[RMDB]
RNA sequence: GGGAACGACUCGAGUAGAGUCGAAAACCGCGAAAGGCUGCAAGAAGUCUCUUGGAAUAGAGCACGAAACAGGGUGAUAGUCCCGUACUGCAGGCGAGUAUCGGACGCGUCAGCUCCAGAGUAUCGGCAUCCCGCCUUAGUUCGCUAAGGCGGGAUGAAAAGAAACAACAACAACAAC
Reactivity to DMS in 0.01 (KOAc 150mM, MgCl2 10mM, bicine 150mM(pH8.5), 24C), signal-to-noise 1, nucleotides 027 to 126: c000c000g020c040g000a050a140a060g000g020c050u000g000c020a020a020g000a020a010g010u000c000u000c000u010u000g000g100a300a020u000a000g000a020g050c050a050c040g000a290a090a020c040a150g000g000g000u000g000a290u000a090g000u010c000c000c000g000u000a230c020u050g020c000a090g000g000c020g030a080g000u000a120u000c190g010g000a160c030g000c110g000u000c200a040g030c060u000c020c010a080g020a080g010u020a030u000c040g000g010